[RMDB]
RNA sequence: GGGAACGACUCGAGUAGAGUCGAAAAGCGGGCCUGGCCGACCCGGCCGGCACGUUGGUGCACACCGCCCAACGUCCCACCCCGGCGUAUGGCGGAGCCGAACAGGUCUGGGCCGCGGUCGCCGAGACACUCUCAUCAUUUUCGAAUGAUGAGAGUGAAAAGAAACAACAACAACAAC
Reactivity to DMS in 0.01 (KOAc 150mM, MgCl2 10mM, bicine 150mM(pH8.5), 24C), signal-to-noise 9, nucleotides 027 to 126: g010c030g000g010g010c020c000u000g020g010c050c010g000a120c210c110c040g010g010c020c130g000g010c050a010c020g010u000u000g000g010u010g020c010a150c300a160c140c080g020c010c000c040a070a020c010g000u010c030c030c080a300c070c030c020c080g010g000c010g010u000a080u010g010g000c000g010g010a300g010c000c010g000a050a070c120a160g010g000u010c040u000g020g010g020c000c000g010c040g000g000u000c030g010c010c010g010a140g000a290
Reactivity to 2A3 in 0.01 (KOAc 150mM, MgCl2 10mM, bicine 150mM(pH8.5), 24C), signal-to-noise 5, nucleotides 027 to 126: g030c020g030g000g090c000c030u060g020g000c040c030g050a090c050c010c000g000g000c030c000g040g030c010a000c020g070u090u130g150g030u200g000c050a050c030a060c160c040g000c000c010c000a000a010c000g020u020c020c020c020a110c010c010c000c010g010g010c020g020u110a120u180g010g000c030g020g000a020g000c010c000g020a050a030c050a080g000g040u030c060u120g030g020g030c020c000g000c010g010g020u050c030g010c030c010g020a030g010a020

Structure probing data (DMS and 2A3) for a 177-nucleotide construct. Source: RMDB library OK2TST, as collected in RNAgym. The RNA was probed in 150 mM KOAc, 10 mM MgCl2 and 150 mM bicine (pH 8.5) at 24 C. As a SHAPE reagent, 2A3 marks flexible, mostly unpaired nucleotides at the ribose 2'-OH. DMS adducts were read by reverse transcription with MarathonRT. For DMS, 12,367 sequencing reads were counted.